Structure probing data (DMS) for a 177-nucleotide construct. For DMS, 1,843 sequencing reads were counted. The RNA was probed in 150 mM KOAc, 10 mM MgCl2 and 150 mM bicine (pH 8.5) at 24 C.

RNA sequence: GGGAACGACUCGAGUAGAGUCGAAAAGCCAAGUGCUGGCAGCGCCCAUAAGCUUGGAUACUUGUUGAAGUUAAUCAACCAUGCGCCUGCCUGAUGAGCAACUUCUUUACGCAUCGGGUUAGAUUCAAAAUGGUAGCACAUUCGUGUGCUACCAUUUAAAAGAAACAACAACAACAAC
Reactivity to DMS in 0.01 (KOAc 150mM, MgCl2 10mM, bicine 150mM(pH8.5), 24C), signal-to-noise 2, nucleotides 027 to 126: g030c010c000a020a050g020u000g000c230u000g000g000c070a080g010c160g030c030c010c020a070u010a130a200g020c020u000u010g000g020a140u000a060c120u000u000g020u000u000g010a020a170g000u000u000a080a090u020c020a030a100c000c110a090u000g010c080g000c080c050u000g000c000c010u000g010a010u000g000a100g010c050a040a030c250u010u010c190u010u000u010a060c030g000c020a030u000c020g000g020g010u000u000a010g000a100u000u000c100a060